Source: RMDB library M2RFPK, as collected in RNAgym. The record gives the reactivity of an RNA of 207 nucleotides to DMS and 2A3. The DMS profile rests on 1,862 reads.
[RMDB]
RNA sequence: GGGAACGACUCGAGUAGAGUCGAAAAUAAGAAAAAUAAACAAGUCGUGGUAGUCCGCCACUCUAAGGGGACGCCUUUAGAAGAAGAGGCUAGGUGGUAUUCCGGUGUGGGAUACUUGGUAAUAUGUAAGGGGAUGGUACGUUCGCGUACCAUCCAAGUAUUACGCACAGUUCGCUGUGCGUAAUACAAAAGAAACAACAACAACAAC
Reactivity to DMS in 0.01 (KOAc 150mM, MgCl2 10mM, bicine 150mM(pH8.5), 24C), signal-to-noise 1, nucleotides 027 to 156: u000a020a150g010a020a060a100a190a160u000a100a010a110c050a050a150g020u000c000g050u010g040g020u000a090g010u010c000c000g000c000c060a210c070u010c030u010a100a080g010g000g000g010a160c270g000c010c030u000u000u000a050g010a020a130g000a130a130g000a130g020g000c070u010a040g040g010u000g010g040u000a050u000u000c030c040g040g000u000g040u020g020g010g010a070u000a000c070u040u000g040g010u000a100a050u000a100u000g000u010a040a160g020g010g010g020a040u020g000g000u020a020c000g020u010u000c300g070c030g030u010a010c000c000a030u000c000c000a040a080
Reactivity to 2A3 in 0.01 (KOAc 150mM, MgCl2 10mM, bicine 150mM(pH8.5), 24C), signal-to-noise 3, nucleotides 027 to 156: u070a010a000g090a040a100a020a030a000u150a070a070a020c050a060a040g140u100c040g050u070g010g020u050a100g040u020c010c020g040c050c000a050c040u100c030u070a050a060g000g050g000g000a030c020g030c000c000u050u040u030a100g010a120a010g020a000a000g010a030g040g000c010u030a050g010g140u030g040g040u080a060u050u050c030c080g090g080u160g050u180g080g010g020a010u010a040c020u050u080g050g010u060a060a090u070a100u250g070u080a040a050g130g000g000g000a000u000g000g000u000a000c010g010u020u050c170g010c000g170u000a000c000c030a000u000c000c000a000a000